[RMDB]
RNA sequence: GGGAACGACUCGAGUAGAGUCGAAAAGGUUCGUUGCAAACGACCGCGCUUUGACGCCGGUUAGCUUUAGGCCGGACUUAGGCCCAGUUCCACACCGACAUGUCGCCGGCUGGGUAUCCAUUGCACACAAUCUUACCCAGUUCGCUGGGUAAGAUUGAAAAGAAACAACAACAACAAC
Reactivity to DMS in 0.01 (KOAc 150mM, MgCl2 10mM, bicine 150mM(pH8.5), 24C), signal-to-noise 5, nucleotides 027 to 126: g000g010u010u000c050g010u020u040g030c090a040a050a080c050g010a020c010c000g000c150g000c010u000u030u040g010a090c140g000c010c020g000g000u010u010a040g040c120u000u030u020a090g010g000c040c020g000g000a020c030u010u010a070g030g000c020c000c010a110g010u000u010c030c050a130c120a140c120c040g020a080c100a080u020g020u010c090g010c100c050g010g010c040u010g010g000g010u010a060u020c040c040a100u020u000g010c090a100c180a190
Reactivity to 2A3 in 0.01 (KOAc 150mM, MgCl2 10mM, bicine 150mM(pH8.5), 24C), signal-to-noise 9, nucleotides 027 to 126: g030g000u030u030c040g060u130u130g050c040a080a060a030c030g010a000c000c010g020c060g020c050u200u190u300g070a110c090g000c040c010g000g030u030u050a080g010c060u060u060u110a090g040g010c000c000g010g000a020c000u070u110a080g070g000c000c000c010a020g020u120u060c040c010a050c020a040c050c050g090a060c060a140u180g030u100c040g010c040c020g010g000c010u010g020g010g010u040a070u030c030c020a100u030u210g030c060a020c000a000

An RNA of 177 nucleotides, treated with DMS and 2A3 and read out base by base. DMS adducts were read by reverse transcription with MarathonRT. 2A3 is a SHAPE reagent: it acylates the 2'-hydroxyl of flexible nucleotides of all four kinds. 2A3 adducts were read by reverse transcription with SuperScript II with manganese.